Background: Structure probing data (DMS and 2A3) for a 177-nucleotide construct. For 2A3 the reverse transcriptase was SuperScript II with manganese. The reactions ran in a buffer of 150 mM KOAc, 10 mM MgCl2 and 150 mM bicine (pH 8.5), at 24 C. The DMS profile rests on 933 reads. Values cover nucleotides 27 to 126. The data come from the RNA Mapping Database (RMDB), library M2PK50.
RNA sequence: GGGAACGACUCGAGUAGAGUCGAAAAUGAGACACCUUCGGGUGUCUCACAUUAAGCUGACCAGCUAUGAGGUCAAUAUCGUCAUGCUCAAAUAGAAUAAAACAGCUUGCUCCUUCGGGAGCAAGAAUUCACUCAUAGCUUUCGAGCUAUGAGUGAAAAAAGAAACAACAACAACAAC
Reactivity to DMS in 0.01 (KOAc 150mM, MgCl2 10mM, bicine 150mM(pH8.5), 24C), signal-to-noise 1, nucleotides 027 to 126: u010g010a010g010a020c000a010c000c000u000u030c150g050g000g020u000g000u000c000u020c020a010c060a060u000u010a060a100g030c090u000g010a080c020c000a150g030c070u010a090u010g000a160g000g020u000c060a050a030u010a020u010c070g000u000c060a030u020g010c020u000c050a080a050a050u000a050g000a080a050u010a060a050a060a100c180a110g000c000u000u000g010c000u000c000c000u000u000c200g020g000g000a000g000c000a000a000g000a020a080
Reactivity to 2A3 in 0.01 (KOAc 150mM, MgCl2 10mM, bicine 150mM(pH8.5), 24C), signal-to-noise 1, nucleotides 027 to 126: u070g010a000g010a000c010a000c000c000u010u030c230g040g000g000u020g000u010c010u010c000a000c010a010u040u090a040a000g080c000u010g010a000c040c030a020g060c020u100a090u170g080a040g010g100u090c080a070a110u140a060u140c100g080u020c030a080u100g000c000u000c120a010a040a090u190a120g100a040a110u180a190a100a040a010c040a030g060c000u010u000g000c000u030c010c000u010u120c210g090g010g020a030g030c000a000a000g010a000a000